RNA sequence: GGGAACGACUCGAGUAGAGUCGAAAAGAUAUGGAUCCUUCUGCUUGGAUGUCUGGUGGAGUGUUCGUUCGGAAACGAACGGGAGACACUAUGAAGCCAGAGCAUCCAAGCAGAAGGAUCCUAAGUCGAAUCUAUUCGACUUCGGUCGAAUAGAUUCAAAAGAAACAACAACAACAAC
Reactivity to DMS in 0.01 (KOAc 150mM, MgCl2 10mM, bicine 150mM(pH8.5), 24C), signal-to-noise 1, nucleotides 027 to 126: g000a140u030a300u010g010g010a020u000c000c000u000u000c010u020g000c000u020u000g010g000a020u000g000u000c000u000g010g010u000g000g000a020g000u000g000u010u000c010g020u010u000c000g000g000a040a090a100c000g020a000a020c000g000g000g020a300g000a060c010a000c000u000a270u030g040a190a240g010c000c000a020g000a090g020c020a000u000c030c000a000a000g010c000a000g000a020a010g000g000a000u000c000c020u030a000a120g000u000c130